[RMDB]
RNA sequence: GGGAACGACUCGAGUAGAGUCGAAAAGAGCGUCGAGAGACGAAGAGAAGUGCAUGGAUCCACAACGGAGAACGUAAUAAUGCACGCAUGUGGUUUAGUGUCCGGAACAACGGGCACAAGAGGCAGAACGAUGGAGGAGCUUCGGCUCCUCCAUCGUAAAAGAAACAACAACAACAAC
Reactivity to DMS in 0.01 (KOAc 150mM, MgCl2 10mM, bicine 150mM(pH8.5), 24C), signal-to-noise 1, nucleotides 027 to 126: g000a000g000c010g000u000c000g010a300g000a110g010a070c000g100a130a040g000a140g000a270a100g000u000g030c000a010u000g000g100a300u000c000c000a170c300a130a150c080g000g010a300g000a000a110c000g000u030a110a060u000a010a070u030g000c040a150c030g000c300a070u000g000u000g070g070u000u060u000a060g000u000g080u000c000c000g000g000a170a220c250a170a030c000g040g000g010c000a000c000a000a000g000a040g000g000c090a060g000a180
Notes:
Chemical mapping of a 177-nucleotide RNA with DMS.